[RMDB]
RNA sequence: GGGAACGACUCGAGUAGAGUCGAAAACGCAAAGCUGCAGCGCGGCGCUCUGGAGCCCUUGCCCCGCGCACUGCUCUUUACAUGGCCCGACGUGAGGGCACUUCGCGGGCAGUGCUGCGGCCUCGUGAAACUGCCCCUAAGUUCGCUUAGGGGCAAACGUCUGAAAUAACUUCGGUUAUUUCAGACGAAAAGAAACAACAACAACAAC
Reactivity to 2A3 in 0.01 (KOAc 150mM, MgCl2 10mM, bicine 150mM(pH8.5), 24C), signal-to-noise 1, nucleotides 027 to 156: c030g010c010a030a020a000g000c010u010g010c000a020g000c020g050c060g090g000c030g040c050u030c040u170g260g040a030g000c020c020c040u040u150g000c000c000c000c010g000c000g000c010a040c030u030g010c010u030c020u090u070u190a060c060a150u200g100g100c010c020c050g100a110c070g060u060g000a040g030g000g000c020a020c030u040u070c000g000c040g020g030g000c000a040g020u040g030c000u010g000c010g010g020c010c000u010c020g040u030g020a100a030a030c040u030g000c010c000c000c000u000a000a000g020u010u070c200g080c080u000u000a020g000g000g010g010c000a000a000a000